[RMDB]
RNA sequence: GGGAACGACUCGAGUAGAGUCGAAAAGAGAAAAAAUAUUACCGAACGGGCGAUAAUGGUAAUCCAGAAACACUCUUUUAUACUGAAGAAGCUGACGUGCUCACGCCCGACACACACUUGAUCCAUGCUGUUCCCGCUGCGGACAGGCAGAAAAUUGUCUUUUGUUUAACUUCGGUUAAACAAAAGAAAAAGAAACAACAACAACAAC
Reactivity to 2A3 in 0.01 (KOAc 150mM, MgCl2 10mM, bicine 150mM(pH8.5), 24C), signal-to-noise 3, nucleotides 027 to 156: g000a000g020a060a090a070a010a060a030u120a010u080u040a020c010c000g010a060a020c060g030g010g000c030g050a060u060a100a050u120g000g000u020a010a010u040c120c090a050g080a080a130a010c040a020c020u030c000u010u040u060u030a190u090a120c100u090g060a100a050g030a080a010g070c060u060g050a050c050g060u070g030c010u020c020a020c010g000c010c000c000g040a010c030a000c000a000c000a000c040u040u080g030a040u080c040c040a050u130g040c010u040g020u090u040c010c010c010g030c080u080g030c040g040g030a070c030a020g050g000c020a000g120a050a110a070a090u300u300g020
Reactivity to DMS in 0.01 (KOAc 150mM, MgCl2 10mM, bicine 150mM(pH8.5), 24C), signal-to-noise 1, nucleotides 027 to 156: g020a110g020a000a050a090a210a190a060u010a050u000u000a040c020c040g020a220a300c020g030g000g170c020g010a140u000a050a110u000g020g000u000a010a030u000c090c000a070g000a110a100a060c110a160c000u000c020u000u000u000u000a150u020a130c020u020g010a120a110g000a060a060g120c050u020g020a110c030g000u000g020c020u000c030a040c000g000c000c000c000g010a050c100a000c070a060c030a060c040u000u000g010a100u000c050c040a070u000g040c050u020g030u000u000c010c030c020g000c090u020g020c050g040g000a130c060a010g000g000c020a060g000a090a000a130a070u000u000g000
This 207-nucleotide RNA was probed chemically with 2A3 and DMS. High DMS reactivity at an A or C suggests that its Watson-Crick edge is free. Values cover nucleotides 27 to 156. DMS adducts were read by reverse transcription with MarathonRT. It was measured as part of the RMDB library OK3TST. 2A3 is a SHAPE reagent: it acylates the 2'-hydroxyl of flexible nucleotides of all four kinds. For DMS, 1,441 sequencing reads were counted.